[RMDB]
RNA sequence: GGGAACGACUCGAGUAGAGUCGAAAAGAUAUGGAUGUUAGGGAGAAACCAAUACUCGACAUGUCGGAAACGACAUGUCCGAGUUGGUUGGACGAAGUCCUAAGUCAAAGCGCUCUUCGGAGCGCAAGCAUAAUUAGGCGUUCGCGCCUAAUUAUGCAAAAGAAACAACAACAACAAC
Reactivity to DMS in 0.01 (KOAc 150mM, MgCl2 10mM, bicine 150mM(pH8.5), 24C), signal-to-noise 3, nucleotides 027 to 126: g010a090u000a230u010g000g000a020u010g010u010u010a070g000g010g010a210g040a170a040a030c010c000a060a090u010a060c010u010c010g000a020c000a000u000g030u010c000g000g020a090a080a170c000g000a000c000a000u000g000u000c080c030g000a010g000u000u000g000g000u000u000g010g000a240c070g020a100a220g000u000c000c000u000a040a160g000u000c050a080a120a130g020c000g030c010u000c000u000u000c160g020g000a000g000c000g030c000a000a030
Reactivity to 2A3 in 0.01 (KOAc 150mM, MgCl2 10mM, bicine 150mM(pH8.5), 24C), signal-to-noise 2, nucleotides 027 to 126: g040a020u120a050u170g030g010a010u080g080u300u070a050g000g060g040a180g210a170a020a000c010c020a050a050u160a130c000u000c010g010a000c000a000u000g000u000c000g010g000a070a070a020c000g000a000c000a010u010g010u000c060c030g000a000g000u010u030g000g000u030u030g040g060a050c030g040a040a000g010u000c000c000u020a110a010g050u020c060a030a100a100g000c000g000c010u020c000u060u140c300g120g000a000g000c000g010c010a000a000